[RMDB]
RNA sequence: GGGAACGACUCGAGUAGAGUCGAAAAGAAAGCGCGACAGUGAGAUCCUGACCGGCCAUAGGAUCGAACUGGAGGCUGCGAAGCGGUCGAGUCGUAUGAGGCCGGAUAUGCGACGAGCGCGAAGAAAGGGAAUUACGAUGUUCGCAUCGUAAUUCCCAAAAGAAACAACAACAACAAC
Reactivity to 2A3 in 0.01 (KOAc 150mM, MgCl2 10mM, bicine 150mM(pH8.5), 24C), signal-to-noise 2, nucleotides 027 to 126: g040a030a060a000g020c100g020c020g090a020c010a000g000u000g040a030g000a000u000c000c020u160g150a050c000c000g010g030c030c000a140u190a180g000g000a030u010c000g000a010a010c000u000g000g000a000g010g000c010u000g010c050g080a180a000g020c010g010g000u000c000g040a030g050u020c000g000u050a020u000g000a000g000g010c000c000g000g000a010u000a000u050g000c050g020a030c000g040a030g070c000g000c000g070a070a030g190a160a060a060
Reactivity to DMS in 0.01 (KOAc 150mM, MgCl2 10mM, bicine 150mM(pH8.5), 24C), signal-to-noise 1, nucleotides 027 to 126: g000a090a110a120g000c000g020c000g000a260c010a050g020u000g000a300g000a040u000c000c020u020g020a200c030c000g000g020c000c000a190u020a030g060g000a000u000c000g040a110a000c000u000g000g020a190g000g000c000u000g060c070g080a000a040g050c040g010g020u030c020g000a230g070u000c020g010u000a020u000g000a000g010g000c020c000g000g000a070u030a040u040g000c070g010a070c000g000a070g040c060g060c020g040a140a100g020a250a160a180